[RMDB]
RNA sequence: GGGAACGACUCGAGUAGAGUCGAAAAUGGCGUAAGGCGAGGCGAUAACUUCCAUAGUGUCUUAACAACAUUCAUUGACGCAGCACGAGGCCCCGCAGGUGUGGAGUCUGAUGUUGAGACCAAUGAAGACAGUGUUAAUCUUCGGAUUAACACUGUCAAAAGAAACAACAACAACAAC
Reactivity to DMS in 0.01 (KOAc 150mM, MgCl2 10mM, bicine 150mM(pH8.5), 24C), signal-to-noise 2, nucleotides 027 to 126: u000g000g000c110g040u020a070a130g020g030c000g000a050g010g000c040g020a080u000a070a090c110u000u000c030c060a130u000a060g010u000g000u010c040u000u000a100a100c120a060a130c070a090u000u000c080a030u000u030g000a050c060g020c190a230g020c020a050c100g000a160g000g000c010c000c010c010g000c080a130g020g010u000g050u000g000g010a290g000u000c010u000g000a080u000g000u000u010g000a070g010a140c010c030a040a030u010g010a110a070
Reactivity to 2A3 in 0.01 (KOAc 150mM, MgCl2 10mM, bicine 150mM(pH8.5), 24C), signal-to-noise 1, nucleotides 027 to 126: u100g020g000c070g020u050a040a050g010g030c020g030a010g000g010c020g030a030u030a140a110c030u060u000c000c040a020u030a090g130u110g030u000c000u020u080a060a030c050a010a000c030a030u040u050c000a020u000u040g010a010c020g000c030a010g020c000a000c030g070a060g000g090c000c000c000c030g000c040a110g000g220u110g000u020g040g000a020g010u000c060u010g050a090u020g020u020u010g000a000g010a020c010c000a020a060u010g020a060a050
Chemical mapping of a 177-nucleotide RNA with DMS and 2A3. The RNA was probed in 150 mM KOAc, 10 mM MgCl2 and 150 mM bicine (pH 8.5) at 24 C.